Overview: An RNA of 177 nucleotides, treated with DMS and 2A3 and read out base by base. For 2A3, 7,527 sequencing reads were counted. Source: RMDB library OK2TRN, as collected in RNAgym. 2A3 adducts were read by reverse transcription with SuperScript II with manganese. The DMS profile rests on 7,215 reads.
RNA sequence: GGGAACGACUCGAGUAGAGUCGAAAAGCUUUUUUAGUUAAAUCAAUCAUUGCUGCUAAUGAACCAGGUUCCGUAUCAGUCAUAUAACCCGCAUUACCUUCCAUAUUCACUUCCAUCAUGGCAUUACCGUCAUUAUUUCAUUCGUGAAAUAAUGACGAAAAGAAACAACAACAACAAC
Reactivity to DMS in 0.01 (KOAc 150mM, MgCl2 10mM, bicine 150mM(pH8.5), 24C), signal-to-noise 6, nucleotides 027 to 126: g000c040u000u000u000u010u020u000a060g010u010u000a070a090a080u010c080a060a100u000c050a060u010u010g010c060u010g000c040u000a040a070u010g000a080a100c060c030a050g010g010u000u000c030c040g010u000a070u000c050a060g010u010c060a070u000a060u010a090a090c040c010c040g000c080a060u000u000a070c060c020u010u000c020c020a050u000a060u000u000c040a060c080u000u000c030c030a060u000c080a060u000g000g020c080a070u000u010a080c160
Reactivity to 2A3 in 0.01 (KOAc 150mM, MgCl2 10mM, bicine 150mM(pH8.5), 24C), signal-to-noise 5, nucleotides 027 to 126: g010c020u160u120u050u040u130u230a050g030u080u160a080a110a140u120c060a030a040u040c040a080u050u120g030c040u020g000c010u080a100a040u110g030a030a020c020c010a040g010g040u060u010c020c000g000u010a030u080c010a010g090u030c040a020u050a010u020a180a070c020c000c000g020c020a030u030u070a040c000c020u050u000c030c010a030u030a060u110u060c020a030c050u040u010c020c000a070u090c020a060u100g070g000c020a020u050u130a100c070